[RMDB]
RNA sequence: GGGAACGACUCGAGUAGAGUCGAAAAAGCCUGUACGCAGGCAAAUGCAAACGUCUGGGUUUCGUGACAGGCGAGCCGUUCUUUACGACUUGGUUCGUUGUCAACGAAACCUGCACGAUCUGCAAAACAAUGCACCCACUUUCGAGUGGGUGCAUUGAAAAGAAACAACAACAACAAC
Reactivity to 2A3 in 0.01 (KOAc 150mM, MgCl2 10mM, bicine 150mM(pH8.5), 24C), signal-to-noise 5, nucleotides 027 to 126: a000g010c020c000u000g010u060a030c280g020c060a000g000g000c030a060a080a020u070g000c000a000a040a040c010g000u010c030u040g000g000g050u000u000u000c010g000u020g000a010c010a020g090g130c000g000a000g000c000c000g090u150u020c040u080u260u200a120c180g020a020c010u140u300g010g000u010u000c000g000u020u010g000u010c080a080a050c010g000a000a000a000c000c000u000g000c010a000c000g040a140u020c020u040g000c000a000a050a000a080
Reactivity to DMS in 0.01 (KOAc 150mM, MgCl2 10mM, bicine 150mM(pH8.5), 24C), signal-to-noise 2, nucleotides 027 to 126: a160g020c020c010u000g010u010a050c090g060c020a030g000g040c000a000a050a140u000g030c030a000a050a020c050g000u050c010u030g000g000g030u030u000u000c000g010u000g000a020c000a020g000g000c000g010a000g010c000c010g000u000u000c040u000u000u070a200c120g000a030c080u000u050g000g000u000u000c000g020u000u000g000u000c000a120a070c030g000a030a040a010c000c000u010g000c260a000c020g000a100u030c110u000g000c000a110a060a130a100
Structure probing data (2A3 and DMS) for a 177-nucleotide construct. Conditions: 150 mM KOAc, 10 mM MgCl2 and 150 mM bicine (pH 8.5), 24 C. Values cover nucleotides 27 to 126. For 2A3 the reverse transcriptase was SuperScript II with manganese.